[RMDB]
RNA sequence: GGGAACGACUCGAGUAGAGUCGAAAACUCGUUCACGGUUAGGUCUGUCUCUGGCAGAGCAGACCGUCAGGAGGAUGAGGUCACCAUCUUCACGAAGCCAAAGCCAAAUUCCGCCUUGUCCUGUAAAACCAUCCCAGGAUUUCGAUCCUGGGAUGGUAAAAGAAACAACAACAACAAC
Reactivity to 2A3 in 0.01 (KOAc 150mM, MgCl2 10mM, bicine 150mM(pH8.5), 24C), signal-to-noise 3, nucleotides 027 to 126: c010u010c020g090u120u070c030a080c130g000g090u050u170a040g050g010u000c010u020g140u060c000u010c020u040g230g020c100a040g000a000g000c000a010g000a000c000c000g010u000c000a030g010g040a040g030g000a050u020g000a000g050g010u010c030a080c070c000a050u040c000u080u130c100a060c090g040a020a010g000c010c000a070a090a000g010c000c000a030a020a130u120u030c020c000g040c000c000u030u020g070u000c010c010u040g030u120a020a000a130
Reactivity to DMS in 0.01 (KOAc 150mM, MgCl2 10mM, bicine 150mM(pH8.5), 24C), signal-to-noise 1, nucleotides 027 to 126: c030u020c020g030u020u000c050a100c210g000g010u000u010a000g060g010u000c000u000g030u040c040u010c010u060g000g030c190a180g000a000g020c000a040g000a020c010c000g000u020c100a080g000g000a100g000g000a020u000g000a100g000g000u000c070a060c030c060a020u020c010u010u000c090a110c020g000a130a030g000c030c030a060a030a190g000c030c050a050a060a260u020u000c030c020g000c000c020u000u000g000u000c040c000u000g060u040a060a050a010